[RMDB]
RNA sequence: GGGAACGACUCGAGUAGAGUCGAAAAGUGGAGGUGCUGGACCCGGGCGCGGAGACCAAGCCGCCGGCAUGUCUCCAGGGUGCCGGCUGGCGCUGCCGGGGACGGGAGCUGGGCAGCUCGCGGCUGCAGAUAGUAAGAGCUUCGGCUCUUACUAUCUAAAAGAAACAACAACAACAAC
Reactivity to 2A3 in 0.01 (KOAc 150mM, MgCl2 10mM, bicine 150mM(pH8.5), 24C), signal-to-noise 2, nucleotides 027 to 126: g050u060g020g020a020g030g040u070g030c040u050g070g040a050c000c060c070g010g050g050c110g000c030g020g040a080g020a100c060c030a060a000g030c000c030g020c010c030g040g000c020a010u050g090u050c050u030c150c000a020g070g020g030u010g010c010c000g000g030c070u110g020g020c030g020c020u070g070c010c020g050g000g000g000a000c010g000g000g000a100g020c030u080g000g040g050c000a020g020c010u020c030g060c030g060g010c020u070g030c010
Reactivity to DMS in 0.01 (KOAc 150mM, MgCl2 10mM, bicine 150mM(pH8.5), 24C), signal-to-noise 4, nucleotides 027 to 126: g020u000g000g010a080g010g010u000g020c060u010g010g010a140c050c030c020g010g000g020c090g010c070g000g000a110g010a110c110c130a110a150g010c020c020g000c010c020g010g020c000a010u000g000u000c040u000c100c100a070g010g010g010u000g020c010c000g000g020c030u010g050g010c010g010c060u000g010c020c010g020g000g000g020a070c060g000g000g000a080g010c050u010g010g000g020c030a040g000c030u000c120g010c080g010g000c040u010g010c130
Structure probing data (2A3 and DMS) for a 177-nucleotide construct.
The data come from the RNA Mapping Database (RMDB), library OK2TRN.
For DMS, 5,880 sequencing reads were counted.
Reactivities are rounded to 0.1 and cut off at 0 and 3.
The 2A3 profile rests on 2,137 reads.
For DMS the reverse transcriptase was MarathonRT.